[RMDB]
RNA sequence: GGGAACGACUCGAGUAGAGUCGAAAAGAGUUACGAAAUAAUGUUACUCGGAAAAGGCUUCUACACGCACGGAAAAGUGACGUGCGUCGGAAGCUCAAGACGACGCAUGUUACUGGAAUUUAAGAAAGGGAAUAACAUUCUUCGGAAUGUUAUUCCCAAAAGAAACAACAACAACAAC
Reactivity to 2A3 in 0.01 (KOAc 150mM, MgCl2 10mM, bicine 150mM(pH8.5), 24C), signal-to-noise 2, nucleotides 027 to 126: g010a000g010u000u140a010c010g100a140a130a200u300a010a100u160g010u010u090a030c000u000c000g000g000a030a110a030a020g010g010c000u030u010c000u140a000c040a000c060g110c010a020c040g130g010a070a130a000a040g020u040g000a000c000g010u000g000c010g000u000c000g000g020a050a000g070c010u030c070a000a000g110a000c000g000a000c030g020c010a000u010g010u000u020a000c010u070g030g020a080a050u100u010u120a230a100g030a110a040a050
Reactivity to DMS in 0.01 (KOAc 150mM, MgCl2 10mM, bicine 150mM(pH8.5), 24C), signal-to-noise 2, nucleotides 027 to 126: g010a000g020u020u020a000c000g000a150a100a130u050a110a100u030g000u000u000a050c010u030c000g000g020a030a040a040a130g000g000c010u020u060c000u000a040c030a050c010g010c270a110c100g000g000a040a050a130a020g000u000g020a010c020g000u000g000c000g000u000c000g000g000a070a030g000c180u000c200a060a030g010a090c040g000a020c060g000c020a000u010g000u000u000a010c020u000g000g010a140a030u030u010u050a040a100g010a060a110a100